[RMDB]
Conditions: 150 mM KOAc, 10 mM MgCl2 and 150 mM bicine (pH 8.5), 24 C. The record gives the reactivity of an RNA of 177 nucleotides to DMS and 2A3. For 2A3 the reverse transcriptase was SuperScript II with manganese.

RNA sequence: GGGAACGACUCGAGUAGAGUCGAAAACAGAAGCAGGGAAACGUUGUUCAUGGCGGCUCAGUUCGCCGACGCUGAACAGUUCGAAUGGCACCCGCCAGCAUUUAGCCAAUUGAUGCAGCGCCGGUUCCAGAGGGAGACAUUUCGAUGUCUCCCUCUGAAAAGAAACAACAACAACAAC
Reactivity to DMS in 0.01 (KOAc 150mM, MgCl2 10mM, bicine 150mM(pH8.5), 24C), signal-to-noise 3, nucleotides 027 to 126: c090a130g000a120a080g000c040a050g000g010g000a080a060a120c090g010u000u000g000u000u000c050a050u000g020g030c020g010g020c010u000c120a110g020u000u010c150g010c000c020g000a020c060g010c150u010g000a050a060c050a080g000u000u000c060g020a080a080u010g000g010c000a070c040c050c080g020c040c030a080g020c040a050u010u010u000a110g010c050c090a020a110u010u000g010a050u000g000c010a070g000c010g000c020c050g010g010u000u000c060
Reactivity to 2A3 in 0.01 (KOAc 150mM, MgCl2 10mM, bicine 150mM(pH8.5), 24C), signal-to-noise 1, nucleotides 027 to 126: c060a010g110a210a000g040c040a070g000g000g110a030a020a060c020g040u050u010g020u010u010c000a010u050g030g000c040g010g000c050u060c140a070g080u290u120c050g000c000c000g030a030c040g040c100u040g000a050a010c020a050g040u050u070c030g090a090a050u090g000g000c000a040c000c000c000g000c040c000a060g030c060a050u100u060u230a000g050c010c000a030a000u060u120g050a020u070g000c010a010g050c000g000c070c030g020g030u040u060c050

Source information: Values cover nucleotides 27 to 126. The 2A3 profile rests on 1,243 reads. For DMS the reverse transcriptase was MarathonRT. It was measured as part of the RMDB library OK2TRN.